RNA sequence: GGGAACGACUCGAGUAGAGUCGAAAAAUUUACGGUUUGUGCAUCCUUUGGAUUUUUAGCGGAGAAACACAAGCUAUAGCUGUCAAUGUAUUGAUGGGUCAGUGGAUGAAAUGGAGCAACAAAUUUACAUACUAUCGUGAUUCGUCACGAUAGUAUGAAAAGAAACAACAACAACAAC
Reactivity to 2A3 in 0.01 (KOAc 150mM, MgCl2 10mM, bicine 150mM(pH8.5), 24C), signal-to-noise 7, nucleotides 027 to 126: a000u150u130u080a040c030g020g020u000u020u030g020u020g010c020a050u050c010c000u070u090u100g150g020a150u090u080u030u070u230a070g030c040g030g030a030g050a060a100a000c050a010c010a040a020g010c010u030a020u080a120g030c030u010g030u070c020a060a050u080g060u140a120u140u130g050a040u050g030g000g020u030c020a020g030u020g070g030a040u030g010a020a010a040u100g020g000a030g040c010a010a040c020a040a090a030u140u140u060a040
Reactivity to DMS in 0.01 (KOAc 150mM, MgCl2 10mM, bicine 150mM(pH8.5), 24C), signal-to-noise 9, nucleotides 027 to 126: a080u010u010u000a070c140g010g020u000u000u010g020u000g000c060a180u010c060c010u000u000u010g010g010a090u000u000u010u010u010a090g020c070g010g010a090g010a090a100a110c070a030c070a040a050g000c020u000a070u000a090g010c060u000g010u000c040a040a070u000g010u000a080u000u000g000a050u000g010g010g010u000c050a050g020u000g000g010a070u000g000a040a060a070u000g010g010a080g010c040a040a050c120a040a070a110u010u000u000a130